Description:
Chemical mapping of a 177-nucleotide RNA with 2A3 and DMS. The reactions ran in a buffer of 150 mM KOAc, 10 mM MgCl2 and 150 mM bicine (pH 8.5), at 24 C. The data come from the RNA Mapping Database (RMDB), library M2PK50. DMS adducts were read by reverse transcription with MarathonRT. 2A3 adducts were read by reverse transcription with SuperScript II with manganese. For DMS, 2,085 sequencing reads were counted.
RNA sequence: GGGAACGACUCGAGUAGAGUCGAAAAGCUCGGAGGUUCGCCUCCGAGCAAAUAAAAAUAGCAGGAAAACGAGCAAAACCAGCAAAAUACAUAACGCUCGAAAAACACAACAGUUCGCUGUUGUGAAGUCUAUUACUUUCUUCGGAAAGUAAUAGACAAAAGAAACAACAACAACAAC
Reactivity to 2A3 in 0.01 (KOAc 150mM, MgCl2 10mM, bicine 150mM(pH8.5), 24C), signal-to-noise 2, nucleotides 027 to 126: g000c010u000c000g020g020a000g000g030u110u140c210g050c030c000u000c010c000g000a000g000c000a000a000a010u010a000a000a000a000a000u080a020g030c020a020g090g000a070a060a010a050c010g000a000g000c030a050a030a040a110c030c030a010g000c040a120a100a050a130u130a050c050a060u100a080a060c070g010c010u020c000g020a080a000a000a020a000c010a000c000a010a000c000a010g000u060u080c180g050c060u000g000u010u010g010u010g010a020a010
Reactivity to DMS in 0.01 (KOAc 150mM, MgCl2 10mM, bicine 150mM(pH8.5), 24C), signal-to-noise 2, nucleotides 027 to 126: g020c020u000c020g020g000a000g010g020u000u020c280g030c000c010u020c010c000g020a000g030c000a000a000a040u000a010a110a060a120a060u000a150g000c050a010g000g000a090a080a060a120c010g000a040g050c000a100a050a040a070c010c010a040g020c060a050a060a120a080u000a090c060a020u000a020a140c150g000c000u000c000g000a050a060a040a110a160c020a020c000a010a000c000a000g000u000u000c170g020c000u000g020u010u010g000u000g000a030a100